[RMDB]
RNA sequence: GGGAACGACUCGAGUAGAGUCGAAAAGAAAAUAAGAGCGUAAUCGCGUCUUGACGUGAGUGAGCCCACACGAAAAGCUAUCCCAAGUGGGAUACCAUAGCUCACAAUACGCUAAGAUUCGUGUGAAACUCGUAGGUGAUUUCGAUCACCUACGAGUAAAAGAAACAACAACAACAAC
Reactivity to DMS in 0.01 (KOAc 150mM, MgCl2 10mM, bicine 150mM(pH8.5), 24C), signal-to-noise 3, nucleotides 027 to 126: g000a070a070a140a080u080a020a070g000a000g040c020g000u000a070a270u060c010g020c010g010u010c040u020u020g000a010c020g010u000g030a160g000u000g000a050g000c010c300c010a040c030a020c010g000a060a030a110a060g020c300u010a020u020c000c000c000a300a220g040u050g020g000g000a020u000a030c030c060a190u010a080g020c010u000c000a020c060a120a100u010a010c030g040c000u040a050a040g000a140u000u000c010g000u000g020u000g000a240a070
Reactivity to 2A3 in 0.01 (KOAc 150mM, MgCl2 10mM, bicine 150mM(pH8.5), 24C), signal-to-noise 6, nucleotides 027 to 126: g030a020a060a010a030u260a060a020g010a000g030c020g000u000a050a060u050c000g000c000g030u010c070u130u260g120a010c010g010u030g010a040g000u000g010a000g030c020c050c000a010c000a000c010g020a010a020a000a010g060c070u010a010u010c000c000c010a190a120g170u300g120g000g000a010u010a020c020c020a080u040a040g000c000u010c000a010c000a000a110u100a020c020g000c010u030a040a000g040a150u010u020c010g000u000g000u010g040a100a040